[RMDB]
The record gives the reactivity of an RNA of 207 nucleotides to 2A3.
It was measured as part of the RMDB library OK3TST.
Conditions: 150 mM KOAc, 10 mM MgCl2 and 150 mM bicine (pH 8.5), 24 C.
2A3 adducts were read by reverse transcription with SuperScript II with manganese.

RNA sequence: GGGAACGACUCGAGUAGAGUCGAAAAACGGGUACGGGAGGUAUGGCCGCGGGGCCUGAUUACCUACGUGACGGUGACGGAGCCGUCGGCAGUGCUGGUGGUCCGCGGCGUGCGGGACCGGCUGGUCAUCACCUACCCACACGAGCACCAUGCCCUCGCUUAGUAAAUCCUUCGGGAUUUACUAAGCAAAAGAAACAACAACAACAAC
Reactivity to 2A3 in 0.01 (KOAc 150mM, MgCl2 10mM, bicine 150mM(pH8.5), 24C), signal-to-noise 2, nucleotides 027 to 156: a000c120g040g020g010u060a000c080g020g010g010a000g000g080u060a060u120g030g040c020c030g000c030g020g000g040g010c000c000u070g020a150u050u270a010c000c040u070a030c050g080u170g100a010c070g030g220u090g010a060c030g060g040a070g180c000c000g000u000c000g010g030c020a090g110u120g160c020u050g000g030u020g040g060u020c000c000g020c000g080g020c050g010u010g000c010g030g000g060a030c030c060g070g000c140u210g000g050u010c000a010u020c030a020c010c000u150a300c040c070c000a000c010a020c100g030a010g040c050a020c070c010a090u120g070c040c020c000u030c050